RNA sequence: GGGAACGACUCGAGUAGAGUCGAAAAGAUAUGGACGAGAUAAGUCACGUGCUAUGAAGGUACGUAACAUCACAUCGGAAACGAUGUGUGGUACUGGAGCACGUGUGACUUAUCUCGUCCUAAGUCACCAAUAUAUAAGCUUCGGCUUAUAUAUUGGAAAAGAAACAACAACAACAAC
Reactivity to DMS in 0.01 (KOAc 150mM, MgCl2 10mM, bicine 150mM(pH8.5), 24C), signal-to-noise 7, nucleotides 027 to 126: g010a070u010a300u000g010g010a020c010g010a030g000a020u000a000a010g010u000c000a050c000g010u000g010c000u010a190u020g020a210a220g000g000u000a010c010g020u010a070a150c180a050u010c000a000c000a000u000c000g010g010a150a110a230c010g020a010u000g020u010g030u000g010g010u000a000c000u010g010g020a010g010c000a010c000g010u000g020u000g010a020c000u010u000a000u000c000u000c000g000u000c000c000u000a000a040g010u000c030a300
Reactivity to 2A3 in 0.01 (KOAc 150mM, MgCl2 10mM, bicine 150mM(pH8.5), 24C), signal-to-noise 7, nucleotides 027 to 126: g020a010u090a040u220g000g010a000c000g010a010g000a010u000a010a000g010u020c000a000c030g000u000g000c010u120a300u300g070a070a010g030g000u050a010c050g100u130a090a060c040a180u300c010a000c000a010u000c010g030g050a090a070a050c020g000a010u000g000u000g010u010g040g000u010a010c030u050g030g030a000g000c000a000c010g010u010g000u000g000a000c000u000u000a000u000c000u010c000g010u010c000c000u000a000a000g000u000c010a000